This 177-nucleotide RNA was probed chemically with 2A3.
Values are in units of 0.01, from 0 to 300, in steps of 10.
For 2A3 the reverse transcriptase was SuperScript II with manganese.
Values cover nucleotides 27 to 126.
RNA sequence: GGGAACGACUCGAGUAGAGUCGAAAAGGAUUGCGGCAGGCCGUCGCCGCUCGGCAUGGCUUUGCGCAGGACGUCGCCAAUGUCGGCUUCGCCGGUGACGCGGGCGCGGGGGUGGCAAGCGUCAUCACUGAACGGGUGGUUUCGACCACCCGUUCAGAAAAGAAACAACAACAACAAC
Reactivity to 2A3 in 0.01 (KOAc 150mM, MgCl2 10mM, bicine 150mM(pH8.5), 24C), signal-to-noise 2, nucleotides 027 to 126: g020g050a100u030u100g000c010g080g030c090a040g060g040c020c000g030u020c080g000c030c000g140c030u090c070g000g000c000a060u030g050g000c000u230u210u170g040c130g000c020a010g030g000a030c010g020u100c020g000c010c010a010a050u130g020u130c090g000g020c020u180u110c140g000c070c010g030g050u050g010a010c000g000c050g000g000g000c090g020c030g040g000g000g030g000u120g010g000c040a090a090g000c010g020u000c040a000u030c020a040